[RMDB]
RNA sequence: GGGAACGACUCGAGUAGAGUCGAAAAAGAAAUCAUUCGUGAUUUCUGGCAUACUCCGAUUAGCUCAAUUGGCUAGAGUACACCGUUUGGGGCGGUGGGGUUGAAGGUUCGAGUCCUUCAUUGGAGACCAAUUGGAGCUCCCGUUCGCGGGAGCUAAUUAUAGCAUAACCUUCGGGUUAUGCUAUAAAAAAGAAACAACAACAACAAC
Reactivity to 2A3 in 0.01 (KOAc 150mM, MgCl2 10mM, bicine 150mM(pH8.5), 24C), signal-to-noise 1, nucleotides 027 to 156: a010g010a010a000a020u020c000a010u100u090c150g120u050g000a000u000u000u000c000u000g050g030c010a050u070a150c000u000c000c010g040a010u010u060a020g010c010u030c030a040a080u080u260g070g040c030u070a020g000a000g020u010a010c010a000c010c000g010u080u190u160g040g000g030g000c030g000g000u000g020g010g010g000u020u010g010a000a000g000g010u000u000c000g000a010g040u010c000c000u010u000c000a010u000u000g020g020a010g010a020c010c010a050a060u080u180g160g010a000g050c000u050c020c000c000g000u000u040c300g000c010g040g000g010a000g000c000u000a000a010
Reactivity to DMS in 0.01 (KOAc 150mM, MgCl2 10mM, bicine 150mM(pH8.5), 24C), signal-to-noise 3, nucleotides 027 to 156: a010g010a040a020a000u010c000a040u000u000c260g040u000g000a000u000u010u000c020u000g010g000c110a120u000a120c020u000c000c010g030a070u010u000a060g020c010u020c020a070a070u010u000g020g020c170u000a030g010a090g020u000a050c020a000c000c010g020u000u000u010g010g020g020g030c020g000g010u000g000g020g000g020u020u010g020a020a010g000g010u020u000c050g000a300g010u000c000c010u000u000c020a010u000u010g010g000a060g000a080c020c020a020a150u000u000g000g010a080g030c000u000c000c000c010g050u000u000c290g020c080g000g000g010a010g020c000u000a000a020